[RMDB]
RNA sequence: GGGAACGACUCGAGUAGAGUCGAAAAAGUAGCUACGGCUACAAACUGUUAAUGAUGAUCUUGUUUUAAAAACAAUGGGAAUCUCUCUGAAUUAGAGUGAAAGAUGACUUUUAACUGACACAGUAAAGAAUGUUCCUUAUUUCGAUAAGGAACAUUCAAAAGAAACAACAACAACAAC
Reactivity to DMS in 0.01 (KOAc 150mM, MgCl2 10mM, bicine 150mM(pH8.5), 24C), signal-to-noise 7, nucleotides 027 to 126: a110g010u000a010g000c010u000a080c200g050g000c000u010a000c010a070a090a090c040u000g010u000u000a100a080u020g000a050u020g010a170u030c060u000u000g000u010u010u000u050a030a070a090a060a030c020a040a030u020g010g000g000a220a030u000c000u000c020u000c010u000g000a120a130u030u020a010g010a020g010u010g010a050a050a050g000a090u020g000a140c050u000u010u010u020a040a130c050u010g000a190c240a050c060a050g010u010a070a080a130
Reactivity to 2A3 in 0.01 (KOAc 150mM, MgCl2 10mM, bicine 150mM(pH8.5), 24C), signal-to-noise 9, nucleotides 027 to 126: a000g010u000a000g000c010u020a030c290g100g000c000u000a000c020a010a080a000c040u040g030u090u070a140a070u140g100a080u030g020a050u050c020u040u040g050u040u070u080u190a080a170a020a000a010c040a040a050u110g050g020g020a030a030u000c010u000c000u000c000u030g150a250a180u160u160a170g010a020g040u100g090a060a030a020g060a020u110g030a050c020u050u070u040u110a090a040c020u020g080a030c020a010c020a130g060u150a000a140a010

Background
This 177-nucleotide RNA was probed chemically with DMS and 2A3. For DMS the reverse transcriptase was MarathonRT. The data come from the RNA Mapping Database (RMDB), libraries RFM100 and RFMREP.